[RMDB]
RNA sequence: GGGAACGACUCGAGUAGAGUCGAAAAGGAACUAUGUUCAUACAUGAAGCCUCCACGUGUUCGCGAAAGCGAUCGGAAACGAAUGAGCAUAGUUCCGAGCUGAAGGAGGCACGGCUCAAAAUAAAAAGGUGCUAGAACUGUUCGCAGUUCUAGUACCAAAAGAAACAACAACAACAAC
Reactivity to 2A3 in 0.01 (KOAc 150mM, MgCl2 10mM, bicine 150mM(pH8.5), 24C), signal-to-noise 6, nucleotides 027 to 126: g000g000a000a000c000u000a000u000g000u010u000c000a000u000a000c000a000u010g040a100a020g000c000c000u000c000c000a030c010g010u000g000u010u000c000g000c000g050a070a020a020g000c000g000a000u000c000g010g010a050a050a010c010g000a000a000u000g000a000g000c000a000u000a000g000u000u000c000c000g000a000g000c000u020g030a120a050g000g000a000g000g020c060a010c000g000g000c000u000c000a070a080a010a030u260a020a070a020a020a010
Reactivity to DMS in 0.01 (KOAc 150mM, MgCl2 10mM, bicine 150mM(pH8.5), 24C), signal-to-noise 5, nucleotides 027 to 126: g020g010a000a020c000u000a010u000g000u000u020c000a000u010a000c010a010u000g000a100a160g030c000c000u010c000c010a300c030g010u000g010u000u000c000g000c000g000a120a100a170g010c000g030a000u010c000g020g000a070a060a170c010g000a020a000u000g000a000g000c000a010u000a010g000u000u000c000c010g010a000g010c000u000g000a060a100g020g010a010g010g010c000a300c010g000g000c000u000c010a140a060a070a090u060a050a080a060a130a060
Source information
Chemical mapping of a 177-nucleotide RNA with 2A3 and DMS. Source: RMDB library OK1LIB, as collected in RNAgym. The RNA was probed in 150 mM KOAc, 10 mM MgCl2 and 150 mM bicine (pH 8.5) at 24 C. The 2A3 profile rests on 32,603 reads. The DMS profile rests on 11,227 reads. For DMS the reverse transcriptase was MarathonRT. As a SHAPE reagent, 2A3 marks flexible, mostly unpaired nucleotides at the ribose 2'-OH.